[RMDB]
RNA sequence: GGGAACGACUCGAGUAGAGUCGAAAAUGUUCAGCUGAUCGUGGUUUCCGCCAAUGGCCUACGCCUCGACUAAUGUUUCCGGUUUGCCUUCUUUUCGAUCUGAACAGUCAACGCGUCGAGUUGCGAAGCAUCCAAAAUCGUUCGCGAUUUUGGAUGCAAAAGAAACAACAACAACAAC
Reactivity to 2A3 in 0.01 (KOAc 150mM, MgCl2 10mM, bicine 150mM(pH8.5), 24C), signal-to-noise 6, nucleotides 027 to 126: u150g000u040u050c010a020g030c040u050g050a070u050c030g030u040g030g060u060u120u000c010c010g000c000c020a070a070u120g050g010c010c010u020a030c040g040c010c010u030c010g040a040c050u100a070a110u140g030u020u050u010c030c000g010g020u030u060u130g040c020c000u030u070c020u010u100u040u050c030g020a090u010c020u060g050a080a030c000a040g100u090c050a060a050c070g020c030g100u050c030g030a030g010u040u040g030c030g030a050a010
Reactivity to DMS in 0.01 (KOAc 150mM, MgCl2 10mM, bicine 150mM(pH8.5), 24C), signal-to-noise 3, nucleotides 027 to 126: u030g000u000u000c060a070g000c160u000g000a040u000c010g050u020g030g020u000u000u000c030c020g020c040c020a040a150u010g010g000c020c050u010a070c110g010c040c040u000c040g010a060c010u020a070a060u010g000u000u000u000c010c020g010g010u020u010u030g000c050c010u000u020c030u000u010u000u000c040g000a050u010c030u000g010a090a140c090a080g010u010c100a010a060c120g010c080g000u010c040g000a180g000u010u010g010c090g020a060a130